The data come from the RNA Mapping Database (RMDB), library TTRDES. This 177-nucleotide RNA was probed chemically with DMS and 2A3. The reactions ran in a buffer of 150 mM KOAc, 10 mM MgCl2 and 150 mM bicine (pH 8.5), at 24 C. For 2A3, 26,171 sequencing reads were counted. For DMS, 12,971 sequencing reads were counted.
[RMDB]
RNA sequence: GGGAACGACUCGAGUAGAGUCGAAAAGAUAUGGAUAACUGUUGACAUGUUCCUGGGUCGGAAACGACCCAGAGAACAACAGCAAUUUAUCCUAAGUCAAACCAAGCGGUAGUUCGCUACCGCUUGGGAUGAAAACAAAGUUCGCUUUGUUUUCAUCAAAAGAAACAACAACAACAAC
Reactivity to DMS in 0.01 (KOAc 150mM, MgCl2 10mM, bicine 150mM(pH8.5), 24C), signal-to-noise 7, nucleotides 027 to 126: g000a030u000a100u010g000g010a010u000a010a020c270u000g010u010u000g010a300c300a120u010g010u000u000c000c000u000g010g010g020u000c000g010g010a010a020a050c000g010a010c000c000c000a000g000a050g010a010a000c000a040a120c010a010g010c010a010a030u010u000u000a010u000c010c000u000a020a150g000u000c010a110a130a300c000c000a000a000g000c000g010g020u000a010g010u000u010c260g010c000u000a000c000c000g010c000u000u000g000g000
Reactivity to 2A3 in 0.01 (KOAc 150mM, MgCl2 10mM, bicine 150mM(pH8.5), 24C), signal-to-noise 6, nucleotides 027 to 126: g000a000u030a010u080g000g000a010u000a000a010c020u010g020u020u010g130a210c190a300u300g020u000u000c000c000u000g000g000g000u000c000g000g000a050a020a020c000g000a000c040c020c000a000g000a010g000a000a000c030a040a040c000a000g010c000a040a070u100u110u070a010u010c010c000u000a010a010g020u000c040a070a050a120c010c000a000a000g000c000g000g000u020a010g020u050u110c300g010c170u000a000c010c010g000c000u000u000g000g010